[RMDB]
RNA sequence: GGGAACGACUCGAGUAGAGUCGAAAAAUCACCGGUGGGGAACCCCAUCCGGCAACGGCGUAGAAGUAAAUGCUAACCAAUCCGUGGUAUCUACGCGACGGAGCAUCCACGGAUAACUCUAACAAGGCUAAGCGUCUCGGUUUCGACCGAGACGCAACUCACAUAGAUAGUUCGCUAUCUAUGUGAGAAAAGAAACAACAACAACAAC
Reactivity to 2A3 in 0.01 (KOAc 150mM, MgCl2 10mM, bicine 150mM(pH8.5), 24C), signal-to-noise 1, nucleotides 027 to 156: a000u070c020a000c020c000g000g000u000g000g000g000g150a150a200c110c010c000c000a020u060c030c010g020g060c070a110a010c020g020g010c010g020u000a010g020a090a010g010u110a020a010a040u070g020c040u110a060a080c050c060a050a040u030c000c000g000u030g000g000u000a030u010c010u000a020c000g030c000g120a060c080g050g030a040g010c020a000u010c000c000a000c000g000g000a010u020a030a020c060u040c030u100a120a150c090a100a010g100g040c030u160a160a000g030c020g000u000c000u000c000g050g000u040u130u130c240g030a000c020c000g010a010g000a000c000g000c000a000a000